Structure probing data (DMS and 2A3) for a 177-nucleotide construct.
[RMDB]
RNA sequence: GGGAACGACUCGAGUAGAGUCGAAAAUUAAAAUGUGCGUCCCUCCCGAAGCUGCGCGCUCGGUCGAAGAGGACGACCACAGCCGAUAGAGGACUGACGGUCUUCGGUCAAGGGAAAUAGAAAAAAACAAGUACAUUAGGUUCGCCUAAUGUACUUGAAAAGAAACAACAACAACAAC
Reactivity to DMS in 0.01 (KOAc 150mM, MgCl2 10mM, bicine 150mM(pH8.5), 24C), signal-to-noise 6, nucleotides 027 to 126: u010u010a050a040a070a100u000g020u000g000c050g010u000c000c000c010u000c010c000c000g010a070a070g020c020u000g010c150g020c120g010c040u000c010g010g010u010c130g000a080a070g010a140g010g000a040c020g000a030c090c030a050c050a050g010c020c040g010a110u000a120g000a060g010g000a030c010u000g020a160c220g010g000u000c010u000u000c010g010g020u000c050a070a100g010g000g000a050a060a080u010a110g010a020a010a050a070a100a080a150
Reactivity to 2A3 in 0.01 (KOAc 150mM, MgCl2 10mM, bicine 150mM(pH8.5), 24C), signal-to-noise 4, nucleotides 027 to 126: u070u040a020a020a020a120u100g030u050g050c010g000u000c000c000c000u000c010c010c000g040a120a040g000c020u080g040c040g020c020g000c150u000c000g020g000u050c060g020a080a030g050a140g030g010a020c000g000a010c050c000a020c020a010g020c000c030g030a040u100a130g110a040g030g020a040c030u090g070a040c110g040g010u000c000u010u020c020g000g010u050c050a070a080g050g020g100a030a060a010u160a060g170a050a070a040a000a000a000a010
The RNA was probed in 150 mM KOAc, 10 mM MgCl2 and 150 mM bicine (pH 8.5) at 24 C.